[RMDB]
RNA sequence: GGGAACGACUCGAGUAGAGUCGAAAAAUGUGGCGCUCCGCGGUUGGUGAGCAUGCUCGGUCCGUCCGAGAAGCCUUAAAACUGCGACGACACAUUCACCUUGAACCAAGGCGUGUACCGUUACAGGCUAAUAUGUGGUCUUCGGACCACAUAUUAGAAAAGAAACAACAACAACAAC
Reactivity to DMS in 0.01 (KOAc 150mM, MgCl2 10mM, bicine 150mM(pH8.5), 24C), signal-to-noise 4, nucleotides 027 to 126: a000u000g030u000g000g000c010g010c070u000c020c030g010c010g010g020u010u010g020g020u010g000a090g020c000a030u010g010c000u000c010g010g010u010c250c250g000u000c000c000g000a020g000a020a020g020c010c020u000u010a100a100a010a010c000u000g010c010g000a140c010g000a000c010a000c000a010u000u000c060a120c010c010u000u010g000a100a110c150c080a070a060g010g010c070g020u000g010u010a150c030c030g010u000u010a110c180a140g010g000
Reactivity to 2A3 in 0.01 (KOAc 150mM, MgCl2 10mM, bicine 150mM(pH8.5), 24C), signal-to-noise 3, nucleotides 027 to 126: a000u010g000u010g010g000c010g030c070u080c130c010g010c010g000g000u000u010g030g090u090g030a100g030c020a010u160g020c020u010c020g000g030u050c090c210g080u100c010c000g030a000g000a010a000g020c020c000u100u150a050a100a000a000c000u020g010c010g190a300c000g000a000c130a000c000a010u040u040c020a070c000c000u010u080g120a090a070c040c000a120a040g090g000c060g020u100g050u100a070c010c040g020u050u130a060c050a060g060g000

The record gives the reactivity of an RNA of 177 nucleotides to DMS and 2A3.
High 2A3 reactivity points to a flexible backbone, as in loops and unpaired stretches.
For DMS the reverse transcriptase was MarathonRT.
The 2A3 profile rests on 2,737 reads.
Values cover nucleotides 27 to 126.
DMS (dimethyl sulfate) methylates the pairing face of unpaired adenines and cytosines.